Chemical mapping of a 177-nucleotide RNA with DMS and 2A3. DMS (dimethyl sulfate) methylates the pairing face of unpaired adenines and cytosines. The RNA was probed in 150 mM KOAc, 10 mM MgCl2 and 150 mM bicine (pH 8.5) at 24 C. Reactivities are given for positions 27 through 126.

[RMDB]
RNA sequence: GGGAACGACUCGAGUAGAGUCGAAAACUCAAUUUGGAUUUUUAUCACAAAUCUAAAUUUCGUGAAUAUGUAAUCCUGAGUAUUUUUGACAAGUUUUUGUAGAAAGUGACUUAUACUCAAGGAGGAAGGAAUGGACUAUGUUCGCAUAGUCCAUUCCAAAAGAAACAACAACAACAAC
Reactivity to DMS in 0.01 (KOAc 150mM, MgCl2 10mM, bicine 150mM(pH8.5), 24C), signal-to-noise 1, nucleotides 027 to 126: c020u010c020a020a030u000u000u000g010g000a010u000u010u000u010u050a140u050c270a140c150a010a000a000u000c050u000a000a020a000u000u000u000c220g020u050g000a090a160u060a010u040g000u020a300a090u000c000c010u000g010a030g000u000a000u000u000u000u000u000g000a050c050a130a110g020u010u010u020u000u000g010u070a090g020a050a080a100g040u020g010a080c010u060u000a000u010a020c000u000c020a000a040g000g000a030g000g000a170a120
Reactivity to 2A3 in 0.01 (KOAc 150mM, MgCl2 10mM, bicine 150mM(pH8.5), 24C), signal-to-noise 4, nucleotides 027 to 126: c010u010c000a000a000u010u000u050g020g000a010u000u030u010u000u090a260u280c060a040c060a050a010a000u080c020u060a040a020a020u080u090u090c110g030u150g090a110a100u180a120u300g070u090a040a030u000c020c000u000g000a000g010u000a050u000u120u010u070u120g090a090c030a020a040g060u000u140u160u230u170g060u200a120g140a020a080a030g030u040g070a010c010u000u050a010u020a020c000u000c110a060a100g030g000a030g000g090a090a070